[RMDB]
RNA sequence: GGGAACGACUCGAGUAGAGUCGAAAACUUACUUUGUAGUUCCCUUGGCUCAUAGUCUGUGCUAGAGUAAUAGCUGCUCUUUUCCUCUGCAUUGGAAGGAAUAUCUAUCCUUUUAUAUGUAUUCAGACAUUGUGCGGUAGUUCGCUACCGCACAAUGAAAAGAAACAACAACAACAAC
Reactivity to DMS in 0.01 (KOAc 150mM, MgCl2 10mM, bicine 150mM(pH8.5), 24C), signal-to-noise 1, nucleotides 027 to 126: c020u010u000a050c040u030u010u000g000u010a060g000u000u000c040c010c030u010u010g000g000c020u040c070a080u000a080g000u000c040u000g020u010g000c060u010a030g010a090g030u000a080a100u010a130g010c080u010g020c040u000c020u010u000u000u000c000c020u000c200u000g010c030a040u010u000g010g010a020a020g000g000a070a180u020a070u000c280u000a130u000c000c010u000u010u000u010a060u000a020u010g000u000a050u010u000c050a080g020a140